[RMDB]
RNA sequence: GGGAACGACUCGAGUAGAGUCGAAAAUCUGUUUACAAGUUAUCGUUAAGUCCAUGUCUGACCACGAUUCCGUAAACAGAAGCCAGUUUGCGUCAGGUCCGACAUGGACUCUUGGCAGAACUGAUCAACCCUAUCGCCAGUUCGCUGGCGAUAGGGUAAAAGAAACAACAACAACAAC
Reactivity to DMS in 0.01 (KOAc 150mM, MgCl2 10mM, bicine 150mM(pH8.5), 24C), signal-to-noise 1, nucleotides 027 to 126: u010c000u000g000u000u010u000a110c080a050a100g000u000u000a040u000c100g030u010u020a050a070g000u000c000c000a010u000g000u000c030u000g000a030c010c010a060c100g000a110u000u050c110c060g000u000a000a000a010c010a100g000a120a180g050c200c010a110g010u000u010u000g000c010g000u000c070a070g010g010u000c000c060g010a060c060a060u000g000g000a000c010u000c020u000u000g010g020c080a130g000a060a060c040u000g010a170u000c110a050

The record gives the reactivity of an RNA of 177 nucleotides to DMS. For DMS, 746 sequencing reads were counted. Values cover nucleotides 27 to 126. Source: RMDB library OK2TRN, as collected in RNAgym. High DMS reactivity at an A or C suggests that its Watson-Crick edge is free.